[RMDB]
RNA sequence: GGGAACGACUCGAGUAGAGUCGAAAAGAUAUGGAUGUAACUCACAGCCGAGCUAGGAACUACUAGUGACGUUCGGAAACGAACGGAGCUAGCCUAGCGUUUGACGCUGUGAGUUACAUCCUAAGUCCACGUAAAGAGUCUUCGGACUCUUUACGUGAAAAGAAACAACAACAACAAC
Reactivity to DMS in 0.01 (KOAc 150mM, MgCl2 10mM, bicine 150mM(pH8.5), 24C), signal-to-noise 3, nucleotides 027 to 126: g000a100u000a300u030g000g040a020u000g000u010a010a000c010u000c020a010c000a010g000c000c030g000a070g030c000u000a010g000g010a070a020c080u020a300c020u000a000g000u000g000a300c010g030u000u000c000g000g000a130a060a190c000g010a010a030c000g000g000a300g000c010u000a010g000c000c000u000a000g010c000g000u000u020u010g030a130c300g020c000u000g010u000g010a000g000u000u010a010c000a000u000c000c000u000a020a090g000u000c030

Overview
Structure probing data (DMS) for a 177-nucleotide construct. The data come from the RNA Mapping Database (RMDB), library TTRINS. For DMS the reverse transcriptase was MarathonRT. The reactions ran in a buffer of 150 mM KOAc, 10 mM MgCl2 and 150 mM bicine (pH 8.5), at 24 C.